Background
The record gives the reactivity of an RNA of 177 nucleotides to 2A3 and DMS. It was measured as part of the RMDB library OK1LIB. For 2A3 the reverse transcriptase was SuperScript II with manganese. DMS adducts were read by reverse transcription with MarathonRT.
RNA sequence: GGGAACGACUCGAGUAGAGUCGAAAAGCUCUAGGAGACUAGAGCGAUACGUUAGAGAGCUCGUGGCAUGACUAACGGAUAGCCAAGUACGAGGUUGCCAGAGGACAUAGCUAUAGCUAUGUCCAAAGAGCUAUGAUACGUUCGCGUAUCAUAGCUCAAAAGAAACAACAACAACAAC
Reactivity to 2A3 in 0.01 (KOAc 150mM, MgCl2 10mM, bicine 150mM(pH8.5), 24C), signal-to-noise 2, nucleotides 027 to 126: g010c000u000c000u010a000g000g020a030g040a050c000u000a000g000a000g010c000g000a000u010a000c020g000u030u020a080g040a000g020a010g110c030u040c090g120u160g020g010c010a030u140g030a110c020u000a050a000c000g030g020a090u060a020g100c010c000a020a000g070u040a100c100g030a040g050g050u030u010g000c010c010a020g020a110g020g000a000c000a010u000a000g000c010u100a020u040a300g030c000u010a000u020g000u000c000c000a000a000a000
Reactivity to DMS in 0.01 (KOAc 150mM, MgCl2 10mM, bicine 150mM(pH8.5), 24C), signal-to-noise 3, nucleotides 027 to 126: g010c000u010c000u000a010g000g010a240g000a240c020u000a000g000a010g010c020g020a030u000a010c040g010u000u000a020g000a180g020a140g020c050u000c040g020u020g010g010c050a020u000g000a160c020u000a060a030c030g010g000a080u010a050g010c010c020a130a050g010u020a120c090g030a090g050g000u000u000g010c070c050a060g020a210g010g000a000c000a000u000a000g000c010u020a090u020a180g030c000u000a000u000g000u000c000c000a010a030a110